[RMDB]
RNA sequence: GGGAACGACUCGAGUAGAGUCGAAAAUGCCCGCCGAGAAGGGUGACGAAGGCGUUGCUGGACUCGAUGGACGAGCAGGACGUCCGGGACACUUUGGCCAGAAGGGAGCACCCGGACCACCGGGAGAUCAGGGGUAUAGUUUCGACUAUACCCCUGAAAAAGAAACAACAACAACAAC
Reactivity to DMS in 0.01 (KOAc 150mM, MgCl2 10mM, bicine 150mM(pH8.5), 24C), signal-to-noise 4, nucleotides 027 to 126: u020g000c020c000c010g010c100c060g010a090g030a130a150g000g010g010u000g010a090c030g000a170a170g010g000c040g010u000u010g020c020u000g000g010a220c040u000c030g010a190u010g000g000a110c040g010a040g010c030a030g010g000a060c070g000u010c010c020g000g020g010a140c110a050c030u000u000u000g010g020c050c110a090g020a080a080g000g000g000a080g000c090a070c010c000c010g000g020a130c120c200a080c060c010g000g010g000a100g000a120